[RMDB]
RNA sequence: GGGAACGACUCGAGUAGAGUCGAAAAGAUAUGGAUGUGAGCUUGGAUUUACAUGUAACAAGGUUCGGAAACGAACCCGCCCAUGUUGUCAGCUCUGUCCUAAGUCAAAGGCCACUUCGGUGGCCAAGUAAUUACGGACCUUCGGGUCCGUAAUUACAAAAGAAACAACAACAACAAC
Reactivity to 2A3 in 0.01 (KOAc 150mM, MgCl2 10mM, bicine 150mM(pH8.5), 24C), signal-to-noise 1, nucleotides 027 to 126: g010a030u090a000u140g000g000a010u070g170u070g290a050g040c030u150u190g050g030a030u300u300u000a000c000a000u010g140u170a300a200c060a120a110g000g000u000u040c010g010g060a110a080a070c010g010a000a040c010c000c010g000c000c000c020a000u010g030u000u010g000u000c020a010g000c010u000c000u000g000u000c020c000u020a180a010g020u030c050a070a000a120g000g010c000c000a000c060u050u130c240g150g000u030g050g000c000c000a000a010
Reactivity to DMS in 0.01 (KOAc 150mM, MgCl2 10mM, bicine 150mM(pH8.5), 24C), signal-to-noise 1, nucleotides 027 to 126: g020a040u000a300u020g000g030a020u000g020u000g000a020g020c000u000u050g040g040a020u000u030u000a010c000a000u000g000u020a050a190c260a120a110g020g010u000u000c000g010g020a050a080a180c000g000a040a000c000c000c080g030c300c160c010a020u000g000u000u020g000u000c000a020g000c000u020c000u000g000u000c000c000u010a070a190g020u000c030a040a130a070g000g010c000c000a020c000u000u070c270g000g010u000g000g000c000c000a020a000